Structure probing data (2A3 and DMS) for a 177-nucleotide construct.
The RNA was probed in 150 mM KOAc, 10 mM MgCl2 and 150 mM bicine (pH 8.5) at 24 C.
DMS adducts were read by reverse transcription with MarathonRT.
It was measured as part of the RMDB library OK1LIB.
2A3 adducts were read by reverse transcription with SuperScript II with manganese.
The DMS profile rests on 4,017 reads.
RNA sequence: GGGAACGACUCGAGUAGAGUCGAAAAGGAACUAUGUUCAGGCAUGAAGCCUCCACGUGCGUGCGAAAGCACCCGGAAACGGCUGAGCAUAGUUCCGAGCUGAAGGAGGCACGGCUCAAAAUAAAAAGAGCAUAAAUACGUUCGCGUAUUUAUGCUCAAAAGAAACAACAACAACAAC
Reactivity to 2A3 in 0.01 (KOAc 150mM, MgCl2 10mM, bicine 150mM(pH8.5), 24C), signal-to-noise 4, nucleotides 027 to 126: g000g000a000a000c000u000a000u010g000u000u000c000a000g010g000c000a000u010g040a110a020g000c000c000u000c000c000a030c010g010u010g000c010g000u010g000c010g040a100a040a030g010c000a000c000c000c000g010g030a050a060a030c010g000g000c000u000g000a000g000c000a000u000a000g000u000u000c000c000g000a000g000c000u030g020a130a050g000g000a010g000g000c040a010c000g000g000c000u000c010a090a110a010a020u300a020a080a030a010a010
Reactivity to DMS in 0.01 (KOAc 150mM, MgCl2 10mM, bicine 150mM(pH8.5), 24C), signal-to-noise 2, nucleotides 027 to 126: g010g010a000a000c010u010a000u000g010u010u000c020a000g040g000c010a010u000g010a120a120g040c000c000u050c000c000a300c010g020u000g010c020g050u020g000c000g020a110a040a050g000c000a010c000c000c000g000g000a110a090a090c000g000g000c030u000g020a020g050c000a010u040a000g030u000u000c010c000g020a020g010c040u000g010a040a140g020g000a000g030g020c000a300c050g000g000c000u010c000a060a060a100a090u060a040a070a080a070a090